[RMDB]
RNA sequence: GGGAACGACUCGAGUAGAGUCGAAAAUUCUAAUAGCCACCGCCUUUUUUGGUUAUGUCCUACCAUGAGGACAAAUAUCAUUCUGAGCAGCAACAGUAAUUACAAACCUUCUAACCGCCAUCCCAUAGGGAUGGUAAGACUUCGGUCUUACCAUCCCAAAAGAAACAACAACAACAAC
Reactivity to DMS in 0.01 (KOAc 150mM, MgCl2 10mM, bicine 150mM(pH8.5), 24C), signal-to-noise 3, nucleotides 027 to 126: u000u020c040u010a100a080u020a090g000c000c000a060c070c060g000c010c070u030u050u030u020u000u000g000g000u000u000a240u010g010u010c010c000u000a160c140c100a090u040g000a040g010g000a020c040a030a040a090u030a070u010c040a040u000u030c060u020g000a100g000c020a040g000c070a040a110c040a090g030u010a040a020u010u020a120c110a070a050a090c060c050u000u010c070u010a100a100c050c040g000c010c010a070u000c000c000c000a050u010a160
Reactivity to 2A3 in 0.01 (KOAc 150mM, MgCl2 10mM, bicine 150mM(pH8.5), 24C), signal-to-noise 9, nucleotides 027 to 126: u060u000c010u030a080a060u070a120g030c010c010a030c020c030g060c010c020u050u100u070u030u070u110g020g000u030u050a070u090g010u000c000c010u050a170c030c080a170u190g180a020g010g010a010c010a000a030a010u170a020u020c040a030u090u010c020u050g050a020g030c030a000g050c010a020a030c010a090g060u140a070a070u090u060a090c050a070a100a070c010c000u070u050c020u070a040a070c010c020g020c030c000a040u020c010c000c030a050u130a080